[RMDB]
RNA sequence: GGGAACGACUCGAGUAGAGUCGAAAAGUCCUGCAGGUGAUUGGGGCUGUAGCAAUUUUAUUGAAGAUUAAAGUUUGAUUGACCUUUGUUAGGGUGAUUAACCCUUCUGAAAUUAAAAGCCAGAGCUGAUAGAGUGAUAUUUCGAUAUCACUCUAUCAAAAGAAACAACAACAACAAC
Reactivity to 2A3 in 0.01 (KOAc 150mM, MgCl2 10mM, bicine 150mM(pH8.5), 24C), signal-to-noise 7, nucleotides 027 to 126: g030u010c000c000u010g030c040a050g000g130u100g070a210u110u150g030g000g010g020c010u010g030u070a020g010c030a070a070u020u020u050u050a130u080u200g040a030a010g030a070u080u170a170a060a020g030u050u060u060g050a050u020u100g110a090c010c000u050u050u090g150u170u210a030g010g010g010u010g020a030u050u050a030a040c010c010c000u020u010c010u010g010a020a010a010u070u090a080a110a020a000g010c020c030a030g010a000g070c100u030
Reactivity to DMS in 0.01 (KOAc 150mM, MgCl2 10mM, bicine 150mM(pH8.5), 24C), signal-to-noise 6, nucleotides 027 to 126: g010u010c020c010u010g010c090a070g000g020u010g010a090u010u000g010g010g010g010c020u000g010u010a070g000c090a040a030u010u010u010u000a050u000u020g010a120a050g010a110u010u010a090a090a100g010u010u000u010g020a050u000u000g000a050c020c020u000u010u020g010u020u010a040g010g000g010u000g000a070u000u020a040a030c040c070c010u000u000c030u000g000a080a030a040u010u020a050a070a100a110g000c050c020a060g000a110g010c130u000